The record gives the reactivity of an RNA of 177 nucleotides to DMS and 2A3. For DMS the reverse transcriptase was MarathonRT. The RNA was probed in 150 mM KOAc, 10 mM MgCl2 and 150 mM bicine (pH 8.5) at 24 C. For 2A3 the reverse transcriptase was SuperScript II with manganese.

RNA sequence: GGGAACGACUCGAGUAGAGUCGAAAAAAAAGAUAUGGAGGUAUACGAAUUAGGUGGCACGAAGAACACUCGUCGGAAACGACGAGUGGGAGUGCCACGACUAACUAUAUACCUCCUAAGUCAAAAACAUGAAUCAUAUGUUCGCAUAUGAUUCAUGAAAAGAAACAACAACAACAAC
Reactivity to DMS in 0.01 (KOAc 150mM, MgCl2 10mM, bicine 150mM(pH8.5), 24C), signal-to-noise 3, nucleotides 027 to 126: a080a060a140a130g010a010u000a120u010g010g000a020g010g000u000a000u000a000c070g000a040a070u000u000a020g010g010u000g000g000c000a010c000g010a070a150g000a060a200c020a010c000u000c000g020u000c000g010g000a030a010a050c000g020a000c000g020a010g010u000g000g000g010a020g010u000g000c000c000a010c000g000a110c010u000a000a010c110u000a190u000a000u000a000c000c000u000c000c010u000a010a050g000u010c010a060a070a060a130a140
Reactivity to 2A3 in 0.01 (KOAc 150mM, MgCl2 10mM, bicine 150mM(pH8.5), 24C), signal-to-noise 3, nucleotides 027 to 126: a010a020a010a070g010a000u030a010u050g000g010a010g000g000u000a030u030a030c090g100a300a300u030u010a020g070g000u010g010g000c020a010c050g180a300a030g000a010a000c000a000c000u010c000g020u000c010g010g020a000a020a030c000g000a000c000g000a000g000u000g010g000g000a000g000u010g010c010c000a000c000g010a010c000u010a000a000c000u000a010u000a000u000a060c010c000u000c000c000u000a010a000g010u000c020a030a020a010a100a120